[RMDB]
RNA sequence: GGGAACGACUCGAGUAGAGUCGAAAAAACACGUUGAUUGAAAUUGAACCGUCCUGUUAUCGAAAGAUAGGCAGAAGAUACGAAAUGUGUGACAGCAUGGGAAGUAAAGGCAGACCGUGGUUCCCUUAAAAUCGUCGAAUCUUCGGAUUCGACGAAAUCUUUGCCUUAAGUUCGCUUAAGGCAAAGAAAAAGAAACAACAACAACAAC
Reactivity to DMS in 0.01 (KOAc 150mM, MgCl2 10mM, bicine 150mM(pH8.5), 24C), signal-to-noise 2, nucleotides 027 to 156: a080a010c040a060c000g010u010u010g020a150u000u010g000a050a110a170u000u010g000a090a070c040c020g000u030c020c010u000g010u000u010a060u010c040g000a220a140a160g000a070u000a030g000g010c030a030g030a070a070g010a120u000a090c040g020a080a080a050u000g010u000g010u000g000a170c060a100g000c040a080u000g000g000g000a070a100g010u020a030a060a160g000g000c060a050g000a080c030c020g050u020g020g020u000u000c010c010c000u000u020a050a010a080a120u000c010g020u000c000g000a020a010u010c000u000u000c300g060g000a000u010u000c000g010a000c010g000a000a000a060
Reactivity to 2A3 in 0.01 (KOAc 150mM, MgCl2 10mM, bicine 150mM(pH8.5), 24C), signal-to-noise 2, nucleotides 027 to 156: a000a000c060a020c030g030u060u050g100a220u080u060g040a050a090a070u050u030g020a090a050c030c010g020u030c020c020u030g010u030u030a030u050c010g030a120a030a020g010a020u060a070g120g000c040a020g020a080a020g050a070u080a060c040g050a070a050a070u100g030u020g030u030g090a020c020a010g010c020a020u020g020g060g040a070a020g000u170a080a030a040g040g000c020a000g020a020c010c000g010u020g000g020u020u020c000c000c020u000u000a060a060a020a050u020c000g000u000c000g000a000a000u000c000u020u040c130g090g000a010u000u000c000g000a000c000g010a000a000a000
Source: RMDB library M2RFPK, as collected in RNAgym. The record gives the reactivity of an RNA of 207 nucleotides to DMS and 2A3. For 2A3 the reverse transcriptase was SuperScript II with manganese. Values cover nucleotides 27 to 156. For DMS, 4,135 sequencing reads were counted. For DMS the reverse transcriptase was MarathonRT.